RNA sequence: GGGAACGACUCGAGUAGAGUCGAAAAGAUAUGGACUGGGACGGACAUGUCGGACUUCGGAAACGAAGUUCAGCGACAACAGCCGUUCAGUCCUAAGUCAAAACUGAACGAGUUCGCUCGUUCAGAAUCGCCAUACCAAGUUCGCUUGGUAUGGCGAAAAAGAAACAACAACAACAAC
Reactivity to DMS in 0.01 (KOAc 150mM, MgCl2 10mM, bicine 150mM(pH8.5), 24C), signal-to-noise 1, nucleotides 027 to 126: g000a010u000a080u020g010g000a010c010u000g010g030g090a090c020g020g000a020c140a120u100g000u010c140g000g010a050c000u000u020c000g020g020a040a000a020c000g030a000a000g010u000u000c300a220g000c130g000a050c020a250a140c180a200g040c030c020g000u000u000c000a010g000u010c020c030u000a030a070g020u010c000a080a080a170a170c010u000g000a020a000c010g000a010g010u030u000c300g040c000u000c000g020u000u000c000a010g000a110a060
Reactivity to 2A3 in 0.01 (KOAc 150mM, MgCl2 10mM, bicine 150mM(pH8.5), 24C), signal-to-noise 1, nucleotides 027 to 126: g010a000u000a000u060g010g000a000c010u080g010g070g130a010c030g000g000a020c240a300u300g000u000c000g010g040a000c030u020u000c010g000g040a010a020a010c000g010a010a000g000u040u020c020a070g120c000g070a000c000a300a030c070a120g040c000c000g000u010u000c000a000g000u000c000c000u000a000a000g000u010c020a040a030a220a200c010u000g000a000a000c000g000a010g010u120u150c300g070c180u010c000g000u020u030c000a000g010a030a120

Chemical mapping of a 177-nucleotide RNA with DMS and 2A3. Reactivities are rounded to 0.1 and cut off at 0 and 3. The reactions ran in a buffer of 150 mM KOAc, 10 mM MgCl2 and 150 mM bicine (pH 8.5), at 24 C.